This 177-nucleotide RNA was probed chemically with 2A3 and DMS. It was measured as part of the RMDB library OK1LIB. The DMS profile rests on 49,816 reads. DMS adducts were read by reverse transcription with MarathonRT.

RNA sequence: GGGAACGACUCGAGUAGAGUCGAAAAGACUUUGAUAAGGCCCGAUAUGUAUGACUGUGUCGAUUAUAUUCAAAGUAUAAGGAAGGGCCUUAUAUCCACACUCAUUGUGGAUAAUUUAGCCUUCCAAGAUUGUUGAGUAUUUCGAUACUUAGCAAUCAAAAGAAACAACAACAACAAC
Reactivity to 2A3 in 0.01 (KOAc 150mM, MgCl2 10mM, bicine 150mM(pH8.5), 24C), signal-to-noise 9, nucleotides 027 to 126: g050a010c010u030u020u030g020a020u060a110a080g110g050c030c040c010g030a050u050a050u120g180u060a110u190g110a100c110u090g040u030g020u130c010g040a110u080u110a090u110a020u090u040c010a010a010a020g020u020a080u050a200a030g020g010a000a020g030g020g000c010c000u000u000a000u000a000u000c000c000a000c000a010c040u180c080a160u100u150g000u000g000g000a000u010a000a010u020u020u040a010g020c000c000u000u000c000c000a010a030
Reactivity to DMS in 0.01 (KOAc 150mM, MgCl2 10mM, bicine 150mM(pH8.5), 24C), signal-to-noise 9, nucleotides 027 to 126: g000a050c020u000u000u000g010a070u030a080a090g010g010c090c030c010g000a070u020a030u010g010u030a090u030g000a090c100u020g010u020g010u000c020g000a080u020u020a050u010a050u010u000c040a020a020a050g010u000a050u030a090a130g000g010a030a030g010g010g030c080c020u000u010a010u000a010u000c000c000a000c000a060c300u040c260a120u050u010g020u000g000g000a010u000a000a030u020u010u010a090g010c010c020u000u000c000c010a080a110